Source information
Structure probing data (2A3 and DMS) for a 177-nucleotide construct. The reactions ran in a buffer of 150 mM KOAc, 10 mM MgCl2 and 150 mM bicine (pH 8.5), at 24 C. 2A3 adducts were read by reverse transcription with SuperScript II with manganese.

[RMDB]
RNA sequence: GGGAACGACUCGAGUAGAGUCGAAAAGAAUUUUCCAUCGUAUAAGCCUCAGAAAUUUGGUAGACACUUAAUGAUGAAUAGGUUGGGUUAGAUUUGAUUUGAGAUCUUGAGUCACCAGGCAGUCCCAUCCCACUAAUGCUUUCGAGCAUUAGUGGGAAAAAGAAACAACAACAACAAC
Reactivity to 2A3 in 0.01 (KOAc 150mM, MgCl2 10mM, bicine 150mM(pH8.5), 24C), signal-to-noise 1, nucleotides 027 to 126: g040a050a050u120u000u000u000c000c000a010u050c030g040u100a020u000a170a000g020c000c000u030c000a040g020a100a020a080u050u040u140g090g000u210a150g090a070c000a020c030u000u290a030a030u140g010a000u060g040a210a040u100a060g130g000u040u040g130g020g100u060u050a040g000a230u020u000u100g100a030u000u100u100g140a030g040a000u070c000u000u000g000a000g020u000c000a030c150c040a000g030g020c000a000g120u100c000c000c000a000
Reactivity to DMS in 0.01 (KOAc 150mM, MgCl2 10mM, bicine 150mM(pH8.5), 24C), signal-to-noise 2, nucleotides 027 to 126: g030a140a120u040u030u000u000c000c040a100u000c040g000u010a110u010a070a130g000c000c010u050c080a080g000a050a060a060u010u000u010g020g010u000a050g000a130c180a020c080u000u000a030a030u000g000a060u000g000a080a040u000a070g020g000u010u000g000g000g030u010u020a030g000a090u000u040u040g020a240u010u000u000g000a100g000a020u020c040u000u030g040a060g000u000c020a100c050c030a040g020g000c030a020g020u000c040c000c000a190
Overview
Reactivities are given for positions 27 through 126. For 2A3, 391 sequencing reads were counted.